[RMDB]
RNA sequence: GGGAACGACUCGAGUAGAGUCGAAAAGGGGUGGAGGGAGUGUGUGCUGCUGGAGUAGGAUAGGACACUCACUCACUACUCCCAUCCCUCCUCCUAGCUCACCUGGACAGGUUUUGCUCAUGGAGAAGGCUUUGAGGAUGGAGAAUUUUGGAAGGUGCGAUCAAAUAGGAUUCGUCCUAUUUGAUCGAAAAGAAACAACAACAACAAC
Reactivity to DMS in 0.01 (KOAc 150mM, MgCl2 10mM, bicine 150mM(pH8.5), 24C), signal-to-noise 1, nucleotides 027 to 156: g010g000g020g050u010g000g010a040g010g000g040a020g040u000g020u020g030u000g040c100u010g050c070u000g010g010a090g030u000a060g040g000a230u000a090g010g000a100c020a040c060u000c010a050c040u000c010a070c010u000a070c020u000c070c000c030a070u000c000c010c010u010c020c000u060c000c010u000a070g010c030u010c070a090c010c010u010g020g010a080c060a070g050g000u020u000u000u000g020c040u030c030a110u000g050g010a080g010a130a090g000g010c050u020u010u010g020a090g040g000a060u020g030g000a090g020a100a150u020u000u000u010g040g000a050a070g010g000u010g010
Reactivity to 2A3 in 0.01 (KOAc 150mM, MgCl2 10mM, bicine 150mM(pH8.5), 24C), signal-to-noise 6, nucleotides 027 to 156: g010g010g010g010u110g010g030a040g010g050g010a030g000u050g020u030g020u040g060c100u050g000c050u110g130g040a060g050u130a060g040g080a140u120a130g090g030a030c020a020c080u040c010a020c010u030c020a050c020u090a050c010u010c000c010c020a100u030c000c010c000u020c000c000u000c000c000u010a020g000c010u030c040a070c000c020u030g030g060a070c060a120g090g000u060u080u120u130g030c020u050c050a070u160g020g000a050g020a050a060g040g000c020u090u080u120g040a040g000g020a020u070g030g000a080g010a110a120u110u170u160u150g070g030a080a040g080g020u130g040